Structure probing data (DMS and 2A3) for a 177-nucleotide construct. The reactions ran in a buffer of 150 mM KOAc, 10 mM MgCl2 and 150 mM bicine (pH 8.5), at 24 C. The DMS profile rests on 8,092 reads. DMS adducts were read by reverse transcription with MarathonRT. It was measured as part of the RMDB library OK1LIB. 2A3 adducts were read by reverse transcription with SuperScript II with manganese.
RNA sequence: GGGAACGACUCGAGUAGAGUCGAAAAGCUCUGAGACACAGAUCGAACAACAAAGAGAGAUCGAAAAUCUUAGGGGAGAGAACGAAUCUGUCGUCUUCUCUAGGACAUUGUCGAUCAGAUGUCCAAAGACCAUUCAUUGGUUCGCCAAUGGAUGGUCAAAAGAAACAACAACAACAAC
Reactivity to DMS in 0.01 (KOAc 150mM, MgCl2 10mM, bicine 150mM(pH8.5), 24C), signal-to-noise 5, nucleotides 027 to 126: g010c040u000c010u000g000a060g010a190c020a030c100a160g010a010u000c000g010a130a100c040a020a060c300a060a100a140g000a040g030a210g000a170u000c020g000a150a050a110a140u000c000u000u000a000g000g000g010g000a000g000a040g000a080a050c040g000a100a080u040c170u020g010u000c040g000u000c000u000u000c000u010c000u010a000g000g000a000c100a120u010u010g000u000c000g020a070u010c000a050g000a180u010g000u000c000c030a080a130a070
Reactivity to 2A3 in 0.01 (KOAc 150mM, MgCl2 10mM, bicine 150mM(pH8.5), 24C), signal-to-noise 8, nucleotides 027 to 126: g020c010u000c000u020g070a050g000a010c000a000c010a030g000a020u000c010g030a060a030c020a030a010c040a020a250a010g090a010g010a000g000a060u050c020g010a040a040a020a030u000c000u000u000a000g000g000g030g000a000g000a000g030a060a020c030g020a070a120u160c100u150g130u050c030g070u000c000u010u000c000u000c000u000a000g000g010a000c020a080u040u070g030u010c000g000a010u010c010a010g050a110u030g020u000c010c010a030a030a010